[RMDB]
RNA sequence: GGGAACGACUCGAGUAGAGUCGAAAAGUAGAUGCUCAUUCCAUCUCUUAUGUUCGCCUUAGUGCCUCAUAAACUCCGGAAUGACGCAGAGCCGUUUACGGUGCUUAUCGUCCACUGACAGAUGUCGCUUAUGCCUCAUCAGACACCAUGGACACAAUCCUGGUUUCAACUUCGGUUGAAACCAGGAAAAAGAAACAACAACAACAAC
Reactivity to 2A3 in 0.01 (KOAc 150mM, MgCl2 10mM, bicine 150mM(pH8.5), 24C), signal-to-noise 1, nucleotides 027 to 156: g260u200a090g000a090u050g000c000u000c000a000u000u030c000c010a070u030c090u010c000u030u000a020u010g000u000u010c010g100c000c040u100u210a120g030u080g180c000c000u000c000a000u080a070a020a040c060u060c250c180g000g000a000a000u000g000a000c100g010c020a040g020a000g020c000c020g030u030u070u240a130c060g040g010u040g050c020u180u120a180u200c110g000u000c000c000a000c080u000g000a000c040a080g000a040u000g000u050c050g020c150u220u130a070u300g050c040c000u000c000a040u000c000a040g060a090c030a020c150c040a020u080g060g010a020c000a000c000a040a090